[RMDB]
RNA sequence: GGGAACGACUCGAGUAGAGUCGAAAAUCGCCGCCCUGCCAGGGAGUGCCAAAGACCCUUCCUGGGCCUCUAUCCUCCAAGGCCUGGAGGAGCCUUACCACGCCUUCGUAGAACGCCUCAACAUAGCUAUCAUAACCCGCUUCGGCGGGUUAUGAUAAAAAGAAACAACAACAACAAC
Reactivity to DMS in 0.01 (KOAc 150mM, MgCl2 10mM, bicine 150mM(pH8.5), 24C), signal-to-noise 1, nucleotides 027 to 126: u000c090g050c240c010g000c010c000c050u000g000c010c000a030g000g000g020a110g000u000g030c000c030a100a120a120g020a290c080c020c000u000u000c010c000u000g020g000g000c000c040u020c060u000a110u000c000c000u010c000c040a110a100g000g000c110c100u000g000g000a020g000g000a080g000c070c040u000u000a100c050c040a030c000g010c000c010u000u020c050g010u030a060g000a040a130c120g000c060c010u000c030a060a030c080a030u010a080g010c100
Reactivity to 2A3 in 0.01 (KOAc 150mM, MgCl2 10mM, bicine 150mM(pH8.5), 24C), signal-to-noise 2, nucleotides 027 to 126: u100c020g060c040c000g000c000c000c000u070g020c000c000a000g020g000g000a010g040u090g050c000c060a180a110a030g020a070c040c010c000u010u010c020c000u010g000g030g000c000c000u070c000u050a110u020c000c000u030c000c010a040a040g060g040c030c030u030g000g000a020g000g020a030g000c000c000u010u080a040c000c000a010c050g060c000c020u000u000c010g000u010a060g050a120a040c010g000c010c000u080c050a060a030c020a080u130a010g020c030
Source: RMDB library OK1LIB, as collected in RNAgym. The record gives the reactivity of an RNA of 177 nucleotides to DMS and 2A3. Values cover nucleotides 27 to 126. The DMS profile rests on 1,850 reads. The RNA was probed in 150 mM KOAc, 10 mM MgCl2 and 150 mM bicine (pH 8.5) at 24 C.